Structure probing data (2A3) for a 207-nucleotide construct. The reactions ran in a buffer of 150 mM KOAc, 10 mM MgCl2 and 150 mM bicine (pH 8.5), at 24 C. For 2A3, 700 sequencing reads were counted.
RNA sequence: GGGAACGACUCGAGUAGAGUCGAAAAGACUGUAGUUUCGACUACAGUCAAAAAAGAUAUGGAUCCUCUAGGGAGCGUGGUACUCGGAAACGAGUAUGACGCAUCGAUCUAGACAUGGAUCCUAAGUCAAAAACGGCUGGAAUUCGUUCCAGCCGAAUCAUUGUUGGAUCUUCGGAUCCAACAAUGAAAAAGAAACAACAACAACAAC
Reactivity to 2A3 in 0.01 (KOAc 150mM, MgCl2 10mM, bicine 150mM(pH8.5), 24C), signal-to-noise 1, nucleotides 027 to 156: g020a000c000u000g000u000a000g020u040u060u270c300g060a020c000u010a000c020a000g000u020c000a000a000a000a000a000a000g000a000u000a000u010g000g000a000u010c030c000u010c010u000a020g030g000g010a040g010c030g000u010g050g000u060a010c000u040c010g020g010a000a000a000c000g010a000g020u000a000u010g140a010c010g010c000a000u300c010g000a000u000c000u010a000g010a060c130a200u200g010g000a000u000c000c000u010a010a000g000u010c030a230a000a030a060a090c020g000g010c000u100g000g010a020a010u050u080c140g040u120u020c010c000a010g030c010c000g000a000a010